[RMDB]
This 207-nucleotide RNA was probed chemically with DMS and 2A3.
The DMS profile rests on 4,587 reads.
Source: RMDB library M2RFPK, as collected in RNAgym.
The RNA was probed in 150 mM KOAc, 10 mM MgCl2 and 150 mM bicine (pH 8.5) at 24 C.
RNA sequence: GGGAACGACUCGAGUAGAGUCGAAAAGGCUAUGACUCGUGUCCGUCUGCGUAGCCGACAACAUGCCCAGGUAGCCCAGACCUUCAAGGCUACGGUGCGUUGCGACGCACGGUCUGAUUCUUCACAAAGUAGUCCCGAGUCUUCGGACUCGGGACAAGUUUGUUUAAAUGUUCGCAUUUAAACAAACAAAAGAAACAACAACAACAAC
Reactivity to DMS in 0.01 (KOAc 150mM, MgCl2 10mM, bicine 150mM(pH8.5), 24C), signal-to-noise 2, nucleotides 027 to 156: g010g000c000u000a030u020g000a060c020u000c050g000u000g010u010c100c040g020u000c030u000g060c050g020u000a040g020c000c020g000a140c080a120a100c140a120u000g000c010c020c060a110g020g000u000a050g060c030c000c110a120g010a060c050c010u000u000c080a090a250g010g010c010u000a020c010g000g030u000g020c010g020u000u000g050c180g030a170c020g000c000a010c000g000g000u000c030u020g000a130u010u010c050u010u000c050a150c100a070a120a200g020u000a140g000u000c000c000c000g000a040g000u000c000u000u000c300g030g020a010c000u000c010g010g000g000a000c000a000a020
Reactivity to 2A3 in 0.01 (KOAc 150mM, MgCl2 10mM, bicine 150mM(pH8.5), 24C), signal-to-noise 2, nucleotides 027 to 156: g010g010c020u010a030u060g040a220c020u020c140g080u100g080u130c070c050g110u080c160u050g030c020g010u000a040g010c010c010g010a020c010a120a030c040a040u180g000c010c000c000a020g010g000u000a000g000c000c030c090a030g010a010c000c000u000u000c020a000a000g000g000c000u000a000c000g000g000u000g010c020g000u000u040g070c110g100a000c010g010c000a000c010g000g010u000c000u010g020a050u110u050c010u110u060c150a110c100a290a160a040g070u200a060g000u070c010c030c020g040a000g000u000c000u060u080c110g120g000a020c000u000c000g000g000g000a010c000a000a000